RNA sequence: GGGAACGACUCGAGUAGAGUCGAAAAGAUAUGGAACUACUGGAGAGAUAUGCUAUCGAAGAACAGCGUCGGAAACGACGCUGGGAGAUAGGGUAUCUCGAUGAAAGUAGUUCCUAAGUCAAACAAUUUCUCUCACGUUCGCGUGAGAGAAAUUGAAGCUUACGUGAAUGUUCGCAUUCACGUAAGCAAAAGAAACAACAACAACAAC
Reactivity to 2A3 in 0.01 (KOAc 150mM, MgCl2 10mM, bicine 150mM(pH8.5), 24C), signal-to-noise 1, nucleotides 027 to 156: g030a000u070a030u120g000g010a010a000c000u010a000c000u020g010g020a030g000a000g000a030u000a000u010g170c000u020a000u010c030g160a300a070g010a100a070c020a010g000c000g000u000c010g000g030a130a030a030c010g000a000c040g000c000u030g000g000g010a060g000a000u000a000g050g010g000u030a000u040c000u010c000g010a010u000g000a020a020a000g000u000a000g000u010u000c000c000u000a020a000g020u020c010a070a090a090c000a000a000u020u000u000c000u000c000u010c000a000c020g030u060u070c290g030c000g110u010g000a010g000a000g000a000a000a000u000u010g000a010a010

The data come from the RNA Mapping Database (RMDB), library RNAMAK. The record gives the reactivity of an RNA of 207 nucleotides to 2A3. As a SHAPE reagent, 2A3 marks flexible, mostly unpaired nucleotides at the ribose 2'-OH. For 2A3, 1,696 sequencing reads were counted. The reactions ran in a buffer of 150 mM KOAc, 10 mM MgCl2 and 150 mM bicine (pH 8.5), at 24 C.